[RMDB]
Conditions: 150 mM KOAc, 10 mM MgCl2 and 150 mM bicine (pH 8.5), 24 C. An RNA of 207 nucleotides, treated with 2A3 and read out base by base. 2A3 adducts were read by reverse transcription with SuperScript II with manganese.
RNA sequence: GGGAACGACUCGAGUAGAGUCGAAAAGGGUGGAAGGAUGAGGAUGCUAGGAGGAGGCGUGGCAAGUAAAACCCCAACCCAGCGCAGCCUAGAACUACUCCGAUCACGCGGAUACACGGUUGCAGUGGUUGAGCGGUCAUCCAAUUUCCGUGGCGUGCGUUAAAGCACGGUUCGCCGUGCUUUAACGAAAAGAAACAACAACAACAAC
Reactivity to 2A3 in 0.01 (KOAc 150mM, MgCl2 10mM, bicine 150mM(pH8.5), 24C), signal-to-noise 2, nucleotides 027 to 156: g030g020g000u040g000g060a100a030g030g000a040u160g060a030g070g020a030u050g010c090u080a020g050g000a010g000g020a030g020g030c070g030u030g030g040c010a060a000g040u130a050a080a070a030c020c000c000c000a000a000c000c000c010a070g020c080g000c100a000g000c010c030u080a060g050a120a060c070u040a060c100u000c000c030g040a090u150c090a010c070g070c010g030g000a010u010a150c050a020c060g040g000u020u000g000c000a040g000u050g280g000u010u020g000a030g050c190g010g000u010c010a040u050c030c040a070a040u010u110u020c010c050g050u040g010g000c040g070u070g010
The data come from the RNA Mapping Database (RMDB), library OK3TST.